An RNA of 177 nucleotides, treated with 2A3 and DMS and read out base by base. The DMS profile rests on 11,571 reads. DMS adducts were read by reverse transcription with MarathonRT. Values cover nucleotides 27 to 126. It was measured as part of the RMDB library M2PK90. For 2A3, 12,176 sequencing reads were counted.
[RMDB]
RNA sequence: GGGAACGACUCGAGUAGAGUCGAAAAGUUAUGGAAAACGUCUUAGCUACCACUACAACAACAAUGCUGGACGGUGAUGGUUCGACUUACUCGAAACCAUCACGUAGUGGUAGUGGUUCCCAUUCAAUAAGAUCAAACAUUUCGAUGUUUGAUCUUAAAAAGAAACAACAACAACAAC
Reactivity to 2A3 in 0.01 (KOAc 150mM, MgCl2 10mM, bicine 150mM(pH8.5), 24C), signal-to-noise 7, nucleotides 027 to 126: g020u040u040a080u240g150g050a090a140a000a030c020g050u010c050u060u060a020g000c000u000a000c000c000a000c000u010a000c010a130a010c000a030a010c030a120a240u250g130c110u130g130g080a090c120g050g000u010g000a000u000g010g010u020u010c000g010a030c070u120u220a070c050u110c020g020a050a040a040c000c000a000u000c000a010c020g000u000a000g010u000g000g000u000a000g000u010g000g000u000u000c000c000c000a000u050u030c010a020a050
Reactivity to DMS in 0.01 (KOAc 150mM, MgCl2 10mM, bicine 150mM(pH8.5), 24C), signal-to-noise 9, nucleotides 027 to 126: g010u010u010a090u010g010g000a090a080a070a050c080g010u010c040u010u010a300g010c000u000a010c000c000a010c000u000a020c010a110a070c130a080a080c180a080a120u010g010c100u010g000g010a060c140g030g020u000g010a020u000g000g010u000u000c000g000a030c220u010u000a110c230u000c000g010a020a030a030c010c000a000u000c010a000c010g010u000a010g020u000g000g010u000a010g020u000g020g010u000u000c000c000c000a120u000u010c080a070a160